This 177-nucleotide RNA was probed chemically with DMS and 2A3. DMS adducts were read by reverse transcription with MarathonRT. The reactions ran in a buffer of 150 mM KOAc, 10 mM MgCl2 and 150 mM bicine (pH 8.5), at 24 C. The DMS profile rests on 745 reads. 2A3 adducts were read by reverse transcription with SuperScript II with manganese. High 2A3 reactivity points to a flexible backbone, as in loops and unpaired stretches.
[RMDB]
RNA sequence: GGGAACGACUCGAGUAGAGUCGAAAAGAUAUGGACUGGAGAAUUGAUGACCCGUAACAUCUUUCGGAAACGAAAGUGGGCAAGAUUUGACAGUCCUAAGUCAAAGUAUCCUGUUCGCAGGAUACAAUCUUGUCCUUGUCUUCGGACAAGGACAAGAAAAAGAAACAACAACAACAAC
Reactivity to DMS in 0.01 (KOAc 150mM, MgCl2 10mM, bicine 150mM(pH8.5), 24C), signal-to-noise 2, nucleotides 027 to 126: g000a000u000a300u020g000g020a020c010u000g000g000a300g010a040a010u000u000g020a230u030g000a300c010c000c000g000u040a080a130c300a120u020c020u020u000u010c000g030g000a120a140a140c000g000a000a010a000g020u000g020g020g000c030a140a300g020a000u000u000u000g000a300c000a010g000u000c000c010u000a060a080g040u020c060a060a040a090g010u000a000u000c000c000u000g000u000u020c220g030c000a000g000g000a020u000a000c020a130a060
Reactivity to 2A3 in 0.01 (KOAc 150mM, MgCl2 10mM, bicine 150mM(pH8.5), 24C), signal-to-noise 1, nucleotides 027 to 126: g040a020u070a000u200g050g000a010c010u000g030g020a060g010a080a050u070u060g080a110u300g080a300c000c040c000g040u080a090a030c040a300u210c000u020u030u010c050g010g000a050a030a060c000g000a000a020a050g010u130g000g070g010c070a060a020g000a060u000u020u080g080a010c030a010g030u000c010c000u010a040a000g000u020c040a090a000a090g010u000a000u030c000c000u020g050u050u060c300g000c050a000g020g010a010u030a030c000a000a090